Source: RMDB library OK3TST, as collected in RNAgym.
This 207-nucleotide RNA was probed chemically with 2A3.
2A3 adducts were read by reverse transcription with SuperScript II with manganese.
The RNA was probed in 150 mM KOAc, 10 mM MgCl2 and 150 mM bicine (pH 8.5) at 24 C.

RNA sequence: GGGAACGACUCGAGUAGAGUCGAAAACUGAUAUGCAUAUGUACCUAUAUUAAGCCAGCCUCAGCACCUACUACAAAUCACUGUUCUCAGUGUAUCCUUGUUUCUUCCCUAGGUAUCAGUGAGAAAGGUAGGACACACAAUUCCUUGGAAGAACAGAGAUGCCCAUUAUCUUCGGAUAAUGGGCAUCAAAAGAAACAACAACAACAAC
Reactivity to 2A3 in 0.01 (KOAc 150mM, MgCl2 10mM, bicine 150mM(pH8.5), 24C), signal-to-noise 2, nucleotides 027 to 156: c020u040g000a000u010a010u100g010c020a010u070a020u220g060u160a150c050c010u090a100u010a060u250u150a050a020g000c000c000a000g000c020c020u060c000a040g010c010a050c000c050u030a090c000u020a000c140a000a130a060u110c060a040c020u040g010u080u050c060u020c080a010g000u030g010u080a040u000c000c020u040u090g040u100u100u040c030u010u040c010c010c010u020a040g010g020u000a020u070c020a000g000u000g060a020g160a020a020a000g190g010u020a000g010g040a000c010a000c010a000c000a040a110u120u090c000c010u020u040g040g060a030a000g010a020a010c000a000g050a000